[RMDB]
RNA sequence: GGGAACGACUCGAGUAGAGUCGAAAAAGAUAUGGAAGAGCGCCAACACCAACUGGAGCGCACAGGCUAUAUUCGGAAACGAAUAUAGCUGUGAACUACGCUCGAGGCAGAGCUCUUCCUAAGUCAAUCAAAUGUUAUGGUUCGCCAUAACAUUUGAAAAAGAAACAACAACAACAAC
Reactivity to 2A3 in 0.01 (KOAc 150mM, MgCl2 10mM, bicine 150mM(pH8.5), 24C), signal-to-noise 5, nucleotides 027 to 126: a010g060a050u110a050u120g010g010a000a010g000a010g020c020g070c080c060a130a100c080a100c140c050a150a130c120u190g240g000a020g000c020g150c020a010c010a010g300g080c010u010a010u000a010u010u010c010g020g040a070a100a090c010g010a000a000u000a000u000a000g000c000u010g000u000g010a020a010c070u100a030c030g000c010u020c030g090a090g030g000c130a040g050a050g160c010u000c000u020u010c000c000u000a030a010g030u010c040a020a150
Reactivity to DMS in 0.01 (KOAc 150mM, MgCl2 10mM, bicine 150mM(pH8.5), 24C), signal-to-noise 7, nucleotides 027 to 126: a100g000a060u000a300u000g000g010a020a010g000a010g030c010g030c110c110a110a140c190a150c200c120a100a170c080u010g010g000a010g010c030g000c020a030c040a090g000g010c000u000a010u000a000u000u000c000g000g010a080a090a170c010g010a010a000u000a000u000a000g010c000u000g000u000g000a100a080c120u010a220c010g000c000u010c010g010a100g000g010c140a100g020a190g000c000u000c010u000u000c000c000u000a020a080g000u010c070a120a170